[RMDB]
Overview: Structure probing data (2A3) for a 207-nucleotide construct.

RNA sequence: GGGAACGACUCGAGUAGAGUCGAAAAGAAACAUAGUUCGCUAUGUUUCAAAAAAACCUUUGUGACAUUCGGACAUGUUGUCACGUUCCCAUUGGGAACGAAGUCAACAACAGCCGAUGUCACUCUGGUAAAAAAGGACAGUCUUCGGACUGUCCAACCCAAUCACUGAGUUCGCUCAGUGAUUGGGAAAAGAAACAACAACAACAAC
Reactivity to 2A3 in 0.01 (KOAc 150mM, MgCl2 10mM, bicine 150mM(pH8.5), 24C), signal-to-noise 3, nucleotides 027 to 156: g020a010a000a010c000a000u030a000g020u040u100c200g050c120u000a010u010g000u010u010u000c030a080a010a000a000a030a000a000c000c000u030u000u000g010u010g000a030c040a030u170u160c210g050g000a080c160a240u060g000u000u000g010u020c030a020c050g000u000u000c020c010c110a300u220u300g000g010g000a000a000c000g050a190a030g070u120c100a030a010c000a000a020c020a050g050c000c000g000a000u000g000u010c000a000c000u000c000u000g000g000u050a100a060a030a020a030a060g010g000a000c000a010g010u000c000u050u120c230g170g000a000c000u000g010u000c000c000a000a000
The data come from the RNA Mapping Database (RMDB), library RNAMAK. 2A3 adducts were read by reverse transcription with SuperScript II with manganese.